[RMDB]
RNA sequence: GGGAACGACUCGAGUAGAGUCGAAAACUAAAUGUGUUCCUUAGAACUGGGUAGUGUGGGCAAUCUUGCAGUAAGGUAAGGCUUUUGGACAAUUGAUCUAAAGCUGCACCCCGGAGAGGACUGCACCUGCACACUAAAUGUUCGCAUUUAGUGUGCAAAAAGAAACAACAACAACAAC
Reactivity to 2A3 in 0.01 (KOAc 150mM, MgCl2 10mM, bicine 150mM(pH8.5), 24C), signal-to-noise 2, nucleotides 027 to 126: c000u080a040a140a140u160g020u000g050u030u000c000c000u030u080a110g040a090a090c070u070g060g040g000u100a120g010u020g010u060g050g020g000c020a000a110u020c070u040u110g020c050a060g030u190a180a060g050g000u000a020a020g000g030c030u010u070u110u110g010g010a030c040a170a300u120u150g040a100u000c000u040a010a030a000g040c020u020g000c000a000c030c020c010c020g030g000a070g030a010g020g010a000c000u020g000c000a040c000c020
Reactivity to DMS in 0.01 (KOAc 150mM, MgCl2 10mM, bicine 150mM(pH8.5), 24C), signal-to-noise 2, nucleotides 027 to 126: c000u000a030a070a080u010g010u010g000u000u000c010c060u000u000a130g010a060a070c080u000g000g000g010u010a050g010u000g000u000g010g010g000c070a200a050u010c110u010u000g000c040a030g010u010a090a090g000g010u020a060a300g010g010c030u000u000u000u010g060g020a040c010a200a140u020u000g010a140u000c000u000a010a030a010g010c010u010g010c300a040c100c000c070c030g020g000a110g010a100g000g000a080c100u000g000c020a030c140c120